[RMDB]
RNA sequence: GGGAACGACUCGAGUAGAGUCGAAAAACACCGGAAACGCUGGAACUGUUCGGCAACGCCCUCGGUCUCGACUCACAGGGCGAUAGCGCACGUGAUCAGGCUUUCCAAGACUACCUGCGCCUGACAACAUUCUUUACAUUUUCGAAUGUAAAGAAUGAAAAGAAACAACAACAACAAC
Reactivity to 2A3 in 0.01 (KOAc 150mM, MgCl2 10mM, bicine 150mM(pH8.5), 24C), signal-to-noise 7, nucleotides 027 to 126: a000c030a040c020c020g020g010a070a060a010c080g000c040u050g010g040a060a040c030u070g060u130u060c030g110g000c040a050a030c020g000c010c010c000u010c040g020g030u020c030u050c110g130a080c010u020c050a060c040a070g000g010g000c000g000a020u040a020g020c040g000c010a030c080g050u040g020a080u050c020a020g080g010c020u040u040u000c020c010a030a020g060a040c040u070a070c010c020u030g020c020g020c010c020u060g020a030c020a050a010
Reactivity to DMS in 0.01 (KOAc 150mM, MgCl2 10mM, bicine 150mM(pH8.5), 24C), signal-to-noise 9, nucleotides 027 to 126: a110c100a120c080c050g010g010a050a040a040c140g020c030u000g000g010a080a080c060u000g010u000u000c060g020g020c050a130a120c050g000c010c010c010u000c130g010g000u000c050u010c210g000a040c040u000c070a110c190a060g000g000g010c010g000a050u000a070g010c040g000c090a040c090g010u000g000a090u000c030a070g000g010c050u000u000u000c030c020a090a090g010a110c100u010a080c040c020u000g010c100g000c020c020u000g000a070c150a080a170
An RNA of 177 nucleotides, treated with 2A3 and DMS and read out base by base. Values cover nucleotides 27 to 126. The reactions ran in a buffer of 150 mM KOAc, 10 mM MgCl2 and 150 mM bicine (pH 8.5), at 24 C. 2A3 adducts were read by reverse transcription with SuperScript II with manganese.